[RMDB]
Chemical mapping of a 177-nucleotide RNA with 2A3 and DMS. For DMS, 17,962 sequencing reads were counted. 2A3 is a SHAPE reagent: it acylates the 2'-hydroxyl of flexible nucleotides of all four kinds. 2A3 adducts were read by reverse transcription with SuperScript II with manganese. DMS adducts were read by reverse transcription with MarathonRT. Values cover nucleotides 27 to 126. Conditions: 150 mM KOAc, 10 mM MgCl2 and 150 mM bicine (pH 8.5), 24 C.

RNA sequence: GGGAACGACUCGAGUAGAGUCGAAAAGAUAUGGAGUCCGUAACAUCAUAUCGAAUACAUGAACUACCUCUGAGUGUCGGAAACGACACGAAAGAGGCAUGUAUUCGAUAUGUGGGACUCCUAAGUCCAGCAUAUACUAGUUCGCUAGUAUAUGCUGAAAAGAAACAACAACAACAAC
Reactivity to 2A3 in 0.01 (KOAc 150mM, MgCl2 10mM, bicine 150mM(pH8.5), 24C), signal-to-noise 8, nucleotides 027 to 126: g060a030u110a060u250g000g000a000g010u020c030c040g130u260a110a130c070a290u300c000a000u020a000u010c000g000a000a000u010a000c000a000u020g030a150a100c090u120a130c300c010u000c010u020g010a030g030u000g000u000c000g000g020a080a090a080c010g010a000c000a000c000g000a010a030a000g000a000g000g000c000a000u010g010u000a000u000u000c000g000a000u000a000u000g000u000g000g000g000a000c010u010c000c000u000a090a010g010u000c030
Reactivity to DMS in 0.01 (KOAc 150mM, MgCl2 10mM, bicine 150mM(pH8.5), 24C), signal-to-noise 9, nucleotides 027 to 126: g010a090u010a300u000g010g000a020g020u000c000c000g030u010a100a220c210a060u010c000a000u000a000u000c000g010a020a010u000a000c000a010u000g000a100a070c120u020a300c010c000u000c000u000g000a300g000u000g010u000c000g000g000a120a100a300c000g010a010c000a010c000g000a040a090a020g010a010g000g000c000a000u000g000u000a000u000u000c000g000a000u000a000u000g010u000g000g000g000a010c000u000c000c000u000a010a060g000u000c030